[RMDB]
RNA sequence: GGGAACGACUCGAGUAGAGUCGAAAAGAUAUGGACUACCCACCCUAGCAACGAGGCACUCGGAAACGAGUGCUACCCACCGUUGCAUAGGAGGUCCUAAGUCAAAAUCAGUCCUUCGGGACUGAAACACUUACUCACUGUUCGCAGUGAGUAAGUGAAAAGAAACAACAACAACAAC
Reactivity to DMS in 0.01 (KOAc 150mM, MgCl2 10mM, bicine 150mM(pH8.5), 24C), signal-to-noise 4, nucleotides 027 to 126: g000a060u000a160u000g010g000a000c020u000a070c030c010c020a300c110c010c000u000a000g000c000a000a000c000g020a100g000g000c000a010c000u000c020g000g000a070a110a110c010g000a020g000u000g000c000u000a010c040c010c070a300c090c000g000u010u000g000c000a040u000a020g000g000a050g000g000u000c010c020u010a090a160g000u010c060a050a040a110a080u000c010a010g000u000c000c000u000u020c160g010g010g000a010c000u000g000a000a060a150
Reactivity to 2A3 in 0.01 (KOAc 150mM, MgCl2 10mM, bicine 150mM(pH8.5), 24C), signal-to-noise 4, nucleotides 027 to 126: g040a010u150a080u180g010g020a000c010u180a240c060c020c030a040c000c020c000u010a000g000c010a000a000c010g010a020g000g000c000a000c000u000c000g040g020a070a030a010c010g010a020g000u000g010c000u000a000c020c010c010a050c010c010g010u010u000g000c010a040u030a010g030g000a010g050g010u010c010c000u030a300a050g140u080c080a010a000a030a300u020c000a010g000u020c020c000u090u140c300g060g010g010a000c000u010g000a000a020a010
An RNA of 177 nucleotides, treated with DMS and 2A3 and read out base by base. For 2A3, 7,885 sequencing reads were counted. DMS adducts were read by reverse transcription with MarathonRT. The RNA was probed in 150 mM KOAc, 10 mM MgCl2 and 150 mM bicine (pH 8.5) at 24 C. The data come from the RNA Mapping Database (RMDB), library TTRDEL.